[RMDB]
RNA sequence: GGGAACGACUCGAGUAGAGUCGAAAAGCACAAGACUUCGAACAUUAUAGCAGUUAGUAGUUGCCUAAACCCAUUGCAAUAUAUGGGACAGUAGAGGUCGCAAGCCUAUACUGUGCGGUAAACAUUCAAAAGGGAUGGUACUUCGGUACCAUCCCAACUAUAAUACCAACUUCGGUUGGUAUUAUAGAAAAGAAACAACAACAACAAC
Reactivity to 2A3 in 0.01 (KOAc 150mM, MgCl2 10mM, bicine 150mM(pH8.5), 24C), signal-to-noise 2, nucleotides 027 to 156: g040c020a020c030a080a080g070a070c080u130u110c190g060a160a060c070a110u150u100a140u170a100g060c110a020g010u030u100a030g030u090a030g010u040u060g010c000c000u080a120a060a060c000c000c000a000u000u020g000c000a010a020u020a000u000a000u140g010g000g000a010c000a000g020u010a000g000a000g010g020u150c060g030c080a030a020g000c000c000u010a020u000a010c010u000g010u010g060c020g000g000u030a050a060a030c040a010u150u290c100a090a070a010a070g020g000g000a010u000g000g000u000a000c000u030u060c240g040g010u010a000c010c000a000u000c000c000c000a000a000
Reactivity to DMS in 0.01 (KOAc 150mM, MgCl2 10mM, bicine 150mM(pH8.5), 24C), signal-to-noise 4, nucleotides 027 to 156: g000c000a070c050a060a050g020a090c030u010u000c040g020a120a120c110a080u000u000a090u000a080g000c010a060g010u000u000a110g010u010a140g030u000u010g010c000c040u010a070a090a190c010c010c000a040u000u000g010c120a150a180u000a100u000a010u010g010g010g030a060c010a020g020u010a020g000a020g130g060u000c050g010c300a110a230g000c000c000u000a030u000a010c010u000g030u000g010c090g030g000u000a070a070a100c070a120u000u000c100a040a040a130a220g000g020g000a010u000g020g010u000a000c010u000u000c300g020g030u010a010c000c000a010u000c000c000c000a010a000